The record gives the reactivity of an RNA of 177 nucleotides to DMS and 2A3. The RNA was probed in 150 mM KOAc, 10 mM MgCl2 and 150 mM bicine (pH 8.5) at 24 C. For DMS, 3,596 sequencing reads were counted. For DMS the reverse transcriptase was MarathonRT. Source: RMDB library M2PK90, as collected in RNAgym. The 2A3 profile rests on 5,836 reads. For 2A3 the reverse transcriptase was SuperScript II with manganese.
RNA sequence: GGGAACGACUCGAGUAGAGUCGAAAAUGAAAUAAACGGCACCAAUAAGGAGGUGCCGAACAAGCGUGACCUACCUACACGCAUCAAGCAGUCAGGUAAGACUGCAAAGGAAAGGAAAACAAAAAAACUAACUAAUAGGGUUCGCCCUAUUAGUUAGAAAAGAAACAACAACAACAAC
Reactivity to DMS in 0.01 (KOAc 150mM, MgCl2 10mM, bicine 150mM(pH8.5), 24C), signal-to-noise 3, nucleotides 027 to 126: u020g010a120a100a070u010a050a130a130c010g020g010c000a010c000c000a100a130u000a110a140g020g000a160g030g020u000g000c000c000g000a070a050c160a070a110g010c020g010u000g000a050c070c050u020a070c010c010u000a120c010a010c010g020c000a090u020c150a060a110g000c010a020g000u000c000a070g010g030u020a110a130g010a010c000u000g020c010a030a030a070g040g020a050a040a060g000g010a060a050a050a050c100a010a010a090a050a040a050a120
Reactivity to 2A3 in 0.01 (KOAc 150mM, MgCl2 10mM, bicine 150mM(pH8.5), 24C), signal-to-noise 4, nucleotides 027 to 126: u030g010a030a000a070u200a070a110a050c020g010g000c000a000c010c020a020a150u190a190a080g190g020a080g020g020u010g000c010c000g000a000a000c000a010a060g000c000g000u020g000a060c030c020u050a060c030c010u030a030c020a000c010g020c000a080u140c010a060a000g000c000a000g010u020c000a000g150g190u150a130a010g010a000c010u020g000c000a000a020a000g060g010a110a050a030g060g010a070a090a040a010c050a060a070a020a010a010a000a020